[RMDB]
RNA sequence: GGGAACGACUCGAGUAGAGUCGAAAAACGAAUCUCUUUGCCUUUUGGCUUAGAUCAAGUGUAGUAUCUGUUCUUUUCAGUGUAACAACUGAAAUGACCUCAAUGAGGCUCAUUACCUUUUAAUUUGUUACAAUACACAUUUUUUGGCACCCAAAAUCCAUAUUGUAGCCUUCGGGCUACAAUAUGGAAAAGAAACAACAACAACAAC
Reactivity to 2A3 in 0.01 (KOAc 150mM, MgCl2 10mM, bicine 150mM(pH8.5), 24C), signal-to-noise 2, nucleotides 027 to 156: a000c050g050a040a050u040c040u000c000u020u000u000g020c040c010u090u150u100u300g010g000c040u000u000a020g000a050u080c070a170a040g030u000g000u010a140g020u030a120u070c040u080g060u140u050c090u100u100u040u020c010a000g020u020g000u000a030a020c050a000a000c020u010g060a010a030a030u030g020a030c010c020u030c020a060a300u160g000a000g000g040c010u060c120a030u000u130a080c030c050u140u250u070u110a160a170u090u110u000g040u060u040a020c020a040a010u030a020c000a010c010a100u000u000u010u090u120u170g080g000c060a080c000c000c000a000a070a000a000u020
The data come from the RNA Mapping Database (RMDB), library PDB130. This 207-nucleotide RNA was probed chemically with 2A3. For 2A3 the reverse transcriptase was SuperScript II with manganese. The reactions ran in a buffer of 150 mM KOAc, 10 mM MgCl2 and 150 mM bicine (pH 8.5), at 24 C. Values cover nucleotides 27 to 156.